[RMDB]
RNA sequence: GGGAACGACUCGAGUAGAGUCGAAAAAUCGUGAGCAUCAUUAAAAUUUAUCAAAUAUCGGUAAAUUCACUAAAAUUUUUCAUAAUUAAUAACAUCCCCAAAAAUAGAUAGAAAAAUAACUGUAAACUAUCGAUAUAGGAUUCGUCCUAUAUCGAUAAAAAGAAACAACAACAACAAC
Reactivity to 2A3 in 0.01 (KOAc 150mM, MgCl2 10mM, bicine 150mM(pH8.5), 24C), signal-to-noise 1, nucleotides 027 to 126: a000u150c100g000u040g020a050g040c000a000u060c040a010u000u170a170a170a070a000u080u000u000a050u040c040a080a150a230u170a100u170c020g000g000u000a000a000a040u000u040c020a020c020u060a040a140a110a250u040u180u040u100u000c040a100u180a300a180u110u070a250a010u000a050a050c040a060u040c050c000c000c000a000a090a000a190a000u100a020g100a020u080a040g110a000a180a000a090a000u170a060a000c150u040g140u100a000a000a150c060